[RMDB]
RNA sequence: GGGAACGACUCGAGUAGAGUCGAAAACGCUGUGGCUGCCGAAUCAGCGGGUACCGGUGCGCGACGGGGUAAUGGGUUUCGAUCUGGAGAUGCUCAUCGCUGAAGUUGAGUACAGCCAGAGCGAGGCGAGCUCUUAAUAUUUCGAUAUUAAGAGCUCAAAAGAAACAACAACAACAAC
Reactivity to 2A3 in 0.01 (KOAc 150mM, MgCl2 10mM, bicine 150mM(pH8.5), 24C), signal-to-noise 7, nucleotides 027 to 126: c030g010c020u060g010u020g240g000c020u030g020c030c020g030a020a070u040c010a020g020c000g020g020g000u050a050c000c010g020g050u080g020c070g000c020g040a020c010g010g000g000g030u090a080a070u090g030g020g000u020u040u040c030g020a090u030c080u140g070g030a100g000a050u030g000c000u000c010a070u150c030g030c070u070g060a160a060g060u080u070g030a030g020u060a070c020a010g020c010c000a020g000a000g010c010g000a020g010g130c110
Reactivity to DMS in 0.01 (KOAc 150mM, MgCl2 10mM, bicine 150mM(pH8.5), 24C), signal-to-noise 9, nucleotides 027 to 126: c040g010c010u000g010u000g010g000c020u000g020c090c030g000a180a120u010c030a030g020c020g010g010g010u010a140c040c020g010g010u000g010c050g010c040g000a080c030g000g000g010g020u010a100a080u000g010g000g010u000u000u000c010g000a120u010c100u000g010g010a160g000a080u000g000c010u000c010a030u000c030g000c080u010g000a060a120g010u000u010g000a090g010u000a090c200a030g000c000c010a030g000a020g010c010g010a070g010g010c180